Structure probing data (DMS and 2A3) for a 177-nucleotide construct. For DMS, 1,111 sequencing reads were counted. It was measured as part of the RMDB library OK2TRN.

RNA sequence: GGGAACGACUCGAGUAGAGUCGAAAAAGAGCUGAGGCGGCGCGAAGUGGCGGAGGCGGCAGAGGCAAGGCAGGAGGAGCUGCGGAUCGCAGCCGAGCAGAAAAUGGCGCGCCACGACGCUCAGGCGACCUCUAUUCCGGUUCGCCGGAAUAGAGGUAAAAGAAACAACAACAACAAC
Reactivity to DMS in 0.01 (KOAc 150mM, MgCl2 10mM, bicine 150mM(pH8.5), 24C), signal-to-noise 2, nucleotides 027 to 126: a110g030a100g010c020u000g000a290g000g030c070g020g020c030g020c070g030a070a080g020u000g030g010c100g000g000a080g050g020c090g000g020c080a040g030a210g000g000c120a010a090g000g000c040a100g010g000a170g040g000a210g000c000u020g000c030g010g030a120u000c100g010c020a070g050c000c040g000a100g000c050a100g010a030a040a080a050u000g000g000c030g000c000g000c030c020a030c040g000a230c270g000c000u000c050a080g010g010c030g000
Reactivity to 2A3 in 0.01 (KOAc 150mM, MgCl2 10mM, bicine 150mM(pH8.5), 24C), signal-to-noise 2, nucleotides 027 to 126: a020g030a010g010c010u010g000a010g070g070c090g000g040c010g000c020g040a100a020g090u050g080g030c050g010g110a050g010g000c000g020g000c020a010g070a030g070g070c090a060a100g110g000c020a070g000g130a050g050g040a060g000c000u010g000c000g060g110a130u180c060g030c020a000g000c020c000g030a000g030c060a010g180a030a190a010a030u110g110g030c000g000c000g020c010c000a010c020g000a010c000g000c000u010c010a000g030g000c030g040
DMS adducts were read by reverse transcription with MarathonRT.